[RMDB]
About this RNA: The data come from the RNA Mapping Database (RMDB), library 15KLIB. Chemical mapping of a 170-nucleotide RNA with DMS and 2A3. For 2A3, 4,830 sequencing reads were counted. For DMS the reverse transcriptase was MarathonRT. Conditions: 150 mM KOAc, 10 mM MgCl2 and 150 mM bicine (pH 8.5), 24 C.

RNA sequence: GGGAACGACUCGAGUAGAGUCGAAAAUUAUAAGAAUGGUGCCAUGUAUAAAGGCAAACCAAUUCUUUGGGUCAAUAAAGCAUCUUAUGAUACUAAUCUUAAUAAGUUCAAUAGAGCUAGUUUGCGUGAAUCCAUCGGUUCGCCGAUGGAAAAAGAAACAACAACAACAAC
Reactivity to DMS in 0.01 (KOAc 150mM, MgCl2 10mM, bicine 150mM(pH8.5), 24C), signal-to-noise 4, nucleotides 027 to 129: u010u070a000u050a070a030g020a000a000u020g020g050u000g030c030c000a110u020g050u070a180u060a110a130a070g040g100c010a010a030a050c040c000a060a090u020u020c010u030u020u060g010g010g050u070c090a000a000u050a120a100a070g030c000a080u020c030u030u030a150u030g000a090u000a010c080u030a040a060u050c160u050u030a120a120u090a070a030g020u000u000c090a040a160u000a030g020a060g010c000u020a080g030u020u000u090g010c210g040u040g000a090a100
Reactivity to 2A3 in 0.01 (KOAc 150mM, MgCl2 10mM, bicine 150mM(pH8.5), 24C), signal-to-noise 2, nucleotides 027 to 129: u070u020a100u030a030a010g040a000a000u030g000g000u000g000c000c000a050u040g100u060a040u110a100a120a080g010g030c000a010a050a030c040c000a000a080u050u020c000u040u030u040g040g020g050u060c000a000a000u010a090a070a000g040c000a080u000c000u000u050a110u090g040a000u000a090c010u070a000a060u030c010u040u070a000a000u110a100a060g000u010u000c000a020a020u040a070g050a000g030c070u060a060g070u020u010u030g010c020g090u090g020a000a010